[RMDB]
RNA sequence: GGGAACGACUCGAGUAGAGUCGAAAACUUCUUCAUAUGGAUAUUCAAUAUUUAUUACGCAUACGCCGUGUGGUACUGUGGCGUCCUGCAGUCACGCUAUUUGAAAUCAAUGCGAGAAAAUAUACACCGGACUCAUACCGUUCGCGGUAUGAGUCCGAAAAGAAACAACAACAACAAC
Reactivity to 2A3 in 0.01 (KOAc 150mM, MgCl2 10mM, bicine 150mM(pH8.5), 24C), signal-to-noise 2, nucleotides 027 to 126: c040u060u000c010u080u030c020a040u160a060u150g090g000a100u040a180u130u080c060a070a060u010a100u090u150u030a060u040u140a040c120g000c020a090u040a070c090g010c010c030g040u040g030u120g220g030u070a000c040u110g060u090g030g030c040g040u000c010c010u010g000c020a000g020u060c020a010c010g040c010u010a030u160u130u150g150a040a040a050u000c020a020a020u040g010c010g010a010g030a000a080a080a030u200a010u090a040c010a000c040
This 177-nucleotide RNA was probed chemically with 2A3.
For 2A3 the reverse transcriptase was SuperScript II with manganese.
Source: RMDB library OK1LIB, as collected in RNAgym.